Structure probing data (DMS) for a 177-nucleotide construct.

RNA sequence: GGGAACGACUCGAGUAGAGUCGAAAAGUGCAGAGUGAAAUUCAUAGGUGCACCGCCAAUAUGGCGGAACGACCCGGUACUCCGCGUAGUCGCGCUGUAAACGUUCUGUGUUGGCGUUCAGGCCUCAGACGCACUCACGUUUCGACGUGAGUGCGUCAAAAGAAACAACAACAACAAC
Reactivity to DMS in 0.01 (KOAc 150mM, MgCl2 10mM, bicine 150mM(pH8.5), 24C), signal-to-noise 1, nucleotides 027 to 126: g020u070g000c010a000g000a080g020u000g000a150a060a110u030u000c050a030u030a150g000g050u000g080c050a160c020c030g000c000c000a240a120u020a050u000g050g070c050g000g030a080a000c140g000a100c000c000c050g030g040u000a080c060u010c230c070g000c060g120u040a050g000u050c200g020c040g000c150u000g000u010a030a030a040c030g040u100u000c010u120g000u000g040u010u000g000g080c100g000u030u000c020a110g000g000c110c000u000c140a180
The RNA was probed in 150 mM KOAc, 10 mM MgCl2 and 150 mM bicine (pH 8.5) at 24 C. For DMS the reverse transcriptase was MarathonRT. The DMS profile rests on 922 reads. The data come from the RNA Mapping Database (RMDB), library OK1LIB.